[RMDB]
RNA sequence: GGGAACGACUCGAGUAGAGUCGAAAAGAUAUGGAAAGCGGGAGGUACGAUAAGCUCGGUAUCGGAAACGAUACGGAGCUUUUGACGUACUCGCUUUCCUAAGUCAAAAUCCUCCUUCGGGAGGAAAGCAAUGUACACUGUUCGCAGUGUACAUUGCAAAAGAAACAACAACAACAAC
Reactivity to 2A3 in 0.01 (KOAc 150mM, MgCl2 10mM, bicine 150mM(pH8.5), 24C), signal-to-noise 2, nucleotides 027 to 126: g000a000u040a000u110g000g020a010a000a000g010c050g260g300g030a190g300g180u070a030c040g080a150u060a300a000g000c030u020c100g180g000u000a000u000c000g000g040a050a080a050c010g000a000u030a010c020g020g010a010g000c000u030u000u010u020g020a010c000g000u010a010c020u020c010g000c050u000u000u010c000c000u010a020a010g000u010c010a000a000a010a300u010c010c000u000c020c000u080u160c280g180g000g000a010g000g000a000a010a060
Reactivity to DMS in 0.01 (KOAc 150mM, MgCl2 10mM, bicine 150mM(pH8.5), 24C), signal-to-noise 2, nucleotides 027 to 126: g000a010u000a300u010g000g000a010a010a000g000c000g010g000g030a250g010g000u000a010c000g000a210u000a010a050g020c000u000c000g010g010u000a000u000c010g010g010a060a060a130c000g000a010u000a010c000g010g000a000g020c000u020u000u000u000g000a280c090g010u000a030c010u000c010g000c000u000u010u000c000c000u000a020a060g020u000c040a100a080a120a160u000c000c010u000c000c000u010u030c190g010g000g000a020g000g000a010a030a050